[RMDB]
RNA sequence: GGGAACGACUCGAGUAGAGUCGAAAAAGCGGACAAUACUAAUGGUGAAUUACCGUCUUAUAUCACUGGCGCUAACACCGUGAAGGGCUUCAUGUUAAUCAUAAGCGCGUGUACCGGCUUUAUCACCUGCUGUUAGAGGGUUCGCCCUCUAACAGCAAAAAGAAACAACAACAACAAC
Reactivity to 2A3 in 0.01 (KOAc 150mM, MgCl2 10mM, bicine 150mM(pH8.5), 24C), signal-to-noise 1, nucleotides 027 to 126: a000g000c000g000g020a020c060a080a110u030a170c120u090a040a020u000g000g000u020g040a100a160u040u040a020c020c020g020u000c020u060u290a300u020a020u070c060a040c170u050g070g000c000g010c030u020a040a000c000a010c060c030g000u020g000a040a070g050g030g010c000u040u000c000a020u000g000u010u150a110a060u160c040a080u020a070a010g010c070g000c030g160u010g010u000a190c000c000g280g030c060u060u020u010a100u090c060a070c020c000
Reactivity to DMS in 0.01 (KOAc 150mM, MgCl2 10mM, bicine 150mM(pH8.5), 24C), signal-to-noise 1, nucleotides 027 to 126: a040g010c020g020g000a050c070a080a100u020a090c100u010a090a080u000g010g000u000g000a150a090u000u000a050c250c030g010u010c050u000u020a050u010a080u000c120a160c170u000g010g030c020g030c140u000a010a070c050a030c080c010g000u000g000a170a090g000g000g010c020u000u000c200a000u010g000u010u010a170a100u000c050a020u010a030a010g010c020g000c120g030u000g010u000a080c170c040g010g050c010u000u000u000a090u030c150a060c050c030